[RMDB]
Chemical mapping of a 177-nucleotide RNA with DMS and 2A3. The reactions ran in a buffer of 150 mM KOAc, 10 mM MgCl2 and 150 mM bicine (pH 8.5), at 24 C.
RNA sequence: GGGAACGACUCGAGUAGAGUCGAAAAGAUAUGGAUCCUCAUUUUCUUCUUGGACCAAGCUCGGAAACGAGCUUGCUAGAAGGAUGAGGGAUCCUAAGUCAAACAAGCCUCCUUCGGGAGGCUUGAAGCUUCGAUUAAAGUUCGCUUUAAUCGAAGCAAAAGAAACAACAACAACAAC
Reactivity to DMS in 0.01 (KOAc 150mM, MgCl2 10mM, bicine 150mM(pH8.5), 24C), signal-to-noise 3, nucleotides 027 to 126: g000a070u010a300u010g020g020a050u020c000c010u010c000a040u000u000u000u040c000u010u010c000u010u010g010g010a170c300c020a010a020g020c010u000c000g020g000a090a130a210c010g030a000g020c000u000u000g020c030u010a010g000a010a000g000g000a000u000g010a070g010g030g010a010u000c000c000u010a000a130g000u010c010a140a170a300c030a000a000g010c000c000u000c000c010u010u010c240g020g010g030a020g020g000c000u000u000g010a030a160
Reactivity to 2A3 in 0.01 (KOAc 150mM, MgCl2 10mM, bicine 150mM(pH8.5), 24C), signal-to-noise 1, nucleotides 027 to 126: g030a010u070a030u200g010g000a000u010c000c020u020c000a020u070u110u150u140c000u000u030c010u110u250g100g020a090c140c010a020a020g000c020u000c010g040g000a080a100a080c020g010a030g000c000u000u000g000c000u010a010g010a030a000g030g010a000u010g010a110g040g070g010a000u000c000c010u020a100a010g050u020c120a100a070a130c000a030a030g020c010c000u000c010c010u070u050c130g120g000g000a000g000g010c010u010u000g010a000a000